[RMDB]
RNA sequence: GGGAACGACUCGAGUAGAGUCGAAAAUCACCUGGCGAGCUACAGGAACCAACAGACAGAAAAAAGAGCAGUCAGACGAUCACUUCUGAGGGAGCAAACUCCAAGCAAAACAAAUCGAAUCCAGAUACCUUAUUCAUCGAUUCGUCGAUGAAUAAGGAAAAGAAACAACAACAACAAC
Reactivity to 2A3 in 0.01 (KOAc 150mM, MgCl2 10mM, bicine 150mM(pH8.5), 24C), signal-to-noise 2, nucleotides 027 to 126: u040c000a030c020c030u010g010g000c020g070a090g050c030u060a040c030a060g020g080a060a040c010c010a050a060c040a060g150a010c040a050g210a080a170a000a000a020a020g080a020g010c030a000g050u030c010a000g040a090c040g040a100u080c030a020c100u060u000c020u070g020a070g010g000g020a080g000c080a060a030a040c010u000c010c030a010a040g020c020a040a040a040a110c020a020a090a030u130c100g070a040a010u060c030c000a020g020a160u070a140
Reactivity to DMS in 0.01 (KOAc 150mM, MgCl2 10mM, bicine 150mM(pH8.5), 24C), signal-to-noise 2, nucleotides 027 to 126: u000c130a120c000c010u010g010g010c050g000a090g010c080u030a110c060a020g000g000a060a120c060c040a030a130c080a060g020a040c050a140g000a020a010a090a110a090a120g020a040g010c040a050g010u030c030a090g010a090c050g010a060u000c090a030c040u000u000c050u010g020a050g020g000g010a090g000c040a060a140a130c060u000c030c030a080a090g000c120a030a030a040a020c110a040a060a010u030c070g000a070a090u000c080c040a100g000a090u010a100
Description
Conditions: 150 mM KOAc, 10 mM MgCl2 and 150 mM bicine (pH 8.5), 24 C. The record gives the reactivity of an RNA of 177 nucleotides to 2A3 and DMS. DMS adducts were read by reverse transcription with MarathonRT. For 2A3, 2,179 sequencing reads were counted. 2A3 adducts were read by reverse transcription with SuperScript II with manganese. It was measured as part of the RMDB library OK2TRN.